[RMDB]
RNA sequence: GGGAACGACUCGAGUAGAGUCGAAAACGACGUCGUCGCGUUCGACGGGACGGACCUGCCGUUCUCGCUGUCAGGCAUCCAGGCGCGUGCGGUCGCCGAGGACGGGCACACUGUCGUGACGCUCACCCUCGACGUCGACCAGAUCCGCACUGUCGCCACCCUUAUAUUUAUUCGUAAAUAUAAGGGUAAAAGAAACAACAACAACAAC
Reactivity to 2A3 in 0.01 (KOAc 150mM, MgCl2 10mM, bicine 150mM(pH8.5), 24C), signal-to-noise 6, nucleotides 027 to 156: c050g060a020c010g040u050c010g010u050c050g010c030g080u080u060c020g030a020c000g000g010g060a030c060g060g040a050c020c050u070g040c000c010g020u040u030c040u030c040g060c080u100g120u180c080a070g030g080c030a060u070c060c050a060g020g010c010g000c000g000u020g000c010g000g020u030c030g000c060c010g010a020g000g000a010c060g030g050g050c010a010c000a010c030u110g040u260c080g050u130g030a020c060g010c020u050c040a160c000c020c000u020c010g040a050c030g020u070c030g010a040c020c010a030g020a180u070c020c000g000c010a040c030u120g120u250c050g000c030c000
Reactivity to DMS in 0.01 (KOAc 150mM, MgCl2 10mM, bicine 150mM(pH8.5), 24C), signal-to-noise 3, nucleotides 027 to 156: c010g010a050c030g010u010c080g030u010c020g030c050g010u000u000c020g020a060c000g000g040g020a080c050g030g000a150c060c070u010g000c010c000g010u000u050c010u000c010g050c060u010g000u000c040a130g040g030c080a130u000c020c030a150g030g010c000g020c050g000u010g010c020g040g010u000c000g010c040c000g010a060g020g000a070c010g010g020g000c010a220c050a120c040u000g020u000c110g000u020g000a070c060g050c040u010c020a090c030c020c010u000c010g010a030c010g010u000c040g030a130c090c050a170g000a110u010c020c010g040c030a040c030u000g010u010c010g020c000c030